[RMDB]
RNA sequence: GGGAACGACUCGAGUAGAGUCGAAAAUGGAGCGACUGCAGCGGCAGUCUGAUGAGCUGAGGGAGGAACGCGAAGGGCUUCUCAGGGACAUUGACCUGCUGAAGGACGCCCUGGAAAAGACCAAGGAAGUGAGAAGGGUUUUCGAACCCUUCUCACUAAAAGAAACAACAACAACAAC
Reactivity to DMS in 0.01 (KOAc 150mM, MgCl2 10mM, bicine 150mM(pH8.5), 24C), signal-to-noise 1, nucleotides 027 to 126: u020g010g010a130g010c080g000a110c010u000g020c020a100g000c100g000g020c020a040g010u000c050u010g040a070u010g000a090g000c060u000g050a140g000g000g000a050g000g030a050a050c110g000c150g000a080a050g020g010g000c030u000u000c050u010c020a060g010g010g010a110c100a090u010u000g010a120c020c000u000g000c140u000g020a080a020g000g010a150c160g000c010c000c030u010g010g000a040a030a070a110g000a140c060c040a100a090g000g020a130